[RMDB]
RNA sequence: GGGAACGACUCGAGUAGAGUCGAAAAUUAGAGGUCUCAAAACAGCAAGCUACGUUUAGGUGAUUGUCUAGUCACCUAAAAAGAGAACCCUAGACUCGCAGGCUGAUGGCUUGAGUUAUGUGUCCUUGGUCUGUUAAAGUAAGACAUAACCUAUGGUGUAGAAACACUACUUCGGUAGUGUUUCUACAAAAGAAACAACAACAACAAC
Reactivity to 2A3 in 0.01 (KOAc 150mM, MgCl2 10mM, bicine 150mM(pH8.5), 24C), signal-to-noise 2, nucleotides 027 to 156: u100u060a020g040a020g050g060u010c010u020c000a110a200a110a120c050a020g050c050a110a000g040c060u040a010c060g020u010u020u030a010g000g000u000g050a040u070u080g040u070c020u000a010g000u020c000a020c000c000u010a000a000a000a010a010g060a010g020a120a140c020c020c040u010a020g030a020c000u000c020g020c020a020g020g000c000u010g000a010u010g030g010c010u060u020g060a040g110u030u000a010u070g020u010g000u000c000c000u000u010g010g000u030c000u020g040u020u030a080a000a040g130u070a060a040g100a020c000a000u040a010a010c000c040u040a100u110g150g000u060